RNA sequence: GGGAACGACUCGAGUAGAGUCGAAAACUGCAUUUUGAUAAAAUCACUGCCUUGUGAGGUUUUCAGACCCAGGCCUCCCCUAUGAGGCUGCUGAGAGUUCAGGUUGCCUGCUUUAGCAUAGGAGCACCCAUAUCACGCUUUUCGAAGCGUGAUAUGGAAAAGAAACAACAACAACAAC
Reactivity to 2A3 in 0.01 (KOAc 150mM, MgCl2 10mM, bicine 150mM(pH8.5), 24C), signal-to-noise 1, nucleotides 027 to 126: c050u050g040c070a120u070u110u140u170g140a170u120a140a170a080a040u070c000a020c000u020g110c030c020u070u080g070u050g070a060g060g020u060u050u080u110c030a040g000a070c000c020c020a000g050g040c000c000u060c070c040c020c010u070a100u170g050a010g030g000c010u020g050c030u030g000a100g000a000g080u070u080c020a010g040g020u070u080g090c020c010u100g060c000u140u090u090a070g040c020a020u080a080g130g020a000g020c030a030c000
Reactivity to DMS in 0.01 (KOAc 150mM, MgCl2 10mM, bicine 150mM(pH8.5), 24C), signal-to-noise 3, nucleotides 027 to 126: c050u000g000c120a070u020u000u020u010g010a140u020a040a070a090a260u000c040a040c070u000g000c070c080u000u000g010u000g000a070g010g010u000u000u020u000c110a080g010a160c080c130c020a180g000g000c020c000u010c020c100c060c080u000a030u010g010a030g000g010c000u000g010c080u000g010a060g000a090g010u010u000c050a030g000g010u010u010g000c030c040u010g010c080u000u010u000a090g020c060a070u010a080g010g010a080g010c100a080c230